[RMDB]
RNA sequence: GGGAACGACUCGAGUAGAGUCGAAAAGCACAACCAAUAAGUCCCUCAGCUAGUUGGGCAUUGCACACCAGGCCACCAGGCCAGUAAAUCAAUGGCCAAAGUGCCUUACUCGGGGCAUGGAUAAAUCACCUGUUGGCAUAUUCGUAUGCCAACAGGUAAAAGAAACAACAACAACAAC
Reactivity to 2A3 in 0.01 (KOAc 150mM, MgCl2 10mM, bicine 150mM(pH8.5), 24C), signal-to-noise 1, nucleotides 027 to 126: g000c030a070c000a080a100c000c020a000a080u080a080a000g050u060c000c000c030u100c040a010g000c110u050a040g090u060u040g040g040g000c010a030u000u070g000c010a040c020a020c050c050a100g040g040c050c000a050c020c060a030g000g000c000c000a040g040u030a010a070a050u180c190a030a050u000g030g000c010c000a010a040a050g050u080g030c000c060u020u040a040c010u060c050g000g010g000g050c030a010u040g010g010a030u070a160a030a040u220c040
Reactivity to DMS in 0.01 (KOAc 150mM, MgCl2 10mM, bicine 150mM(pH8.5), 24C), signal-to-noise 2, nucleotides 027 to 126: g010c100a090c160a060a190c000c050a060a060u010a020a080g000u020c010c010c020u040c140a030g050c050u000a010g000u000u020g010g000g000c050a060u000u020g070c150a130c160a050c140c050a050g000g030c070c050a100c150c120a170g000g050c030c000a050g000u020a050a150a180u010c120a040a060u000g000g020c010c030a010a130a090g030u000g010c030c020u010u000a030c080u010c090g030g010g000g020c010a110u000g080g000a220u000a030a010a110u020c150